The record gives the reactivity of an RNA of 207 nucleotides to 2A3. The reactions ran in a buffer of 150 mM KOAc, 10 mM MgCl2 and 150 mM bicine (pH 8.5), at 24 C. 2A3 adducts were read by reverse transcription with SuperScript II with manganese.
RNA sequence: GGGAACGACUCGAGUAGAGUCGAAAAUGGACUUUUUACAGUUCCUACUUAUCCGGUUUUAACGCUGUUUUAUUGGCGCAAAGGUUUACGGAUAAACAACUAAUAAUUAAACCUUUUGAGUGCGAAAAUUGGACGUUUAGGUUCGCCUAAACGUCAAGUGACCAUUCAGUUUCGACUGAAUGGUCACAAAAGAAACAACAACAACAAC
Reactivity to 2A3 in 0.01 (KOAc 150mM, MgCl2 10mM, bicine 150mM(pH8.5), 24C), signal-to-noise 1, nucleotides 027 to 156: u120g000g020a100c020u000u020u110u050u140a060c160a050g010u080u120c000c020u050a120c040u030u030a000u020c020c010g030g000u010u020u000u020a050a020c000g000c010u030g100u150u130u090u040a170u140u220g050g000c000g060c000a020a020a000g010g060u000u000u000a000c000g000g000a000u010a030a070a000c040a050a040c040u160a030a150u160a240a000u110u090a010a020a000c000c000u000u000u070u160g090a040g030u170g120c070g060a030a100a090a170u170u190g120g000a010c020g000u000u000u000a000g030g040u060u080c210g160c050c000u010a000a000a000c000g000u000c000a000a010

Annotation: It was measured as part of the RMDB library M2RFPK.